[RMDB]
RNA sequence: GGGAACGACUCGAGUAGAGUCGAAAAGUAAAAGAGGAGAAAGCGCGCACUCCUCAAGGGCGCAGAUGUACGUACCACAUCAGGUACGAACGCGCCAAGGGUGGGAGGCGCGAACCCACCCAAAAAAGUGCAUCUUAGAGUUCGCUCUAAGAUGCACAAAAGAAACAACAACAACAAC
Reactivity to 2A3 in 0.01 (KOAc 150mM, MgCl2 10mM, bicine 150mM(pH8.5), 24C), signal-to-noise 1, nucleotides 027 to 126: g090u080a080a070a070a030g030a030g030g010a000g030a050a090a020g080c000g000c000g000c030a130c050u030c000c020u000c000a000a030g050g000g020c020g000c030a040g030a250u280g080u080a060c020g000u020a000c000c020a070c020a250u240c060a080g000g010u010a000c010g030a030a000c000g000c010g010c040c010a030a120g050g000g030u110g010g000g010a010g040g000c020g010c000g010a000a000c010c000c010a000c010c010c040a050a080a000a000a030a010